Chemical mapping of a 207-nucleotide RNA with 2A3.
The RNA was probed in 150 mM KOAc, 10 mM MgCl2 and 150 mM bicine (pH 8.5) at 24 C.
Source: RMDB library VIROID, as collected in RNAgym.

RNA sequence: GGGAACGACUCGAGUAGAGUCGAAAAUCCUUUGAUGUUUCCUAGCCAGGGAUUUUCGUCCUCGAGUUUCUUGAUCUUCUUCUUAAUCUUCCGGAGUUCCUUCUCGAGUUCCUCCGACCUUUUCCUUCCAUUUACCCACUGCUCGAGAACAUCUUCCACGUGUUUAUACGUUCGCGUAUAAACACGUAAAAGAAACAACAACAACAAC
Reactivity to 2A3 in 0.01 (KOAc 150mM, MgCl2 10mM, bicine 150mM(pH8.5), 24C), signal-to-noise 3, nucleotides 027 to 156: u010c010c000u040u040u190g090a110u080g100u100u150u220c050c080u120a050g030c010c020a010g000g000g000a010u000u000u000u020c000g010u020c000c000u000c000g010a000g010u030u100u040c060u060u090g060a080u020c020u110u020c020u110u020c030u030u230a110a090u080c070u180u040c050c030g040g010a070g010u040u030c020c000u100u040c030u020c010g060a050g040u040u090c010c010u000c030c020g100a150c040c000u050u100u060u110c010c020u080u040c060c000a070u080u080u180a160c010c000c010a040c040u050g000c000u000c010g000a010g020a030a030c010a050u030c040u040u000c050c020